An RNA of 177 nucleotides, treated with DMS and read out base by base. Values are in units of 0.01, from 0 to 300, in steps of 10. DMS (dimethyl sulfate) methylates the pairing face of unpaired adenines and cytosines. The RNA was probed in 150 mM KOAc, 10 mM MgCl2 and 150 mM bicine (pH 8.5) at 24 C. For DMS the reverse transcriptase was MarathonRT. Source: RMDB library TTRINS, as collected in RNAgym.
RNA sequence: GGGAACGACUCGAGUAGAGUCGAAAAGAUAUGGAAGCCAGUAUUGCAUGAACUACUUCCGCCCUCGCAGUCGGAAACGACUGAACUACGAGUAACAAGAAGCAUGCAAUACUGGCUUCCUAAGUCACUCAACACAAUGGUUCGCCAUUGUGUUGAGAAAAGAAACAACAACAACAAC
Reactivity to DMS in 0.01 (KOAc 150mM, MgCl2 10mM, bicine 150mM(pH8.5), 24C), signal-to-noise 1, nucleotides 027 to 126: g000a070u000a300u030g040g010a010a000g010c000c000a000g000u000a000u000u000g000c000a000u000g000a160a100c050u010a300c000u000u000c000c020g000c300c300c000u000c000g020c000a000g000u000c010g000g000a120a090a190c000g000a000c000u000g010a070a050c100u000a300c010g000a070g040u000a160a130c300a160a000g000a000a000g020c000a020u000g000c000a000a000u000a000c020u000g000g040c000u000u000c000c000u000a000a090g000u010c010a160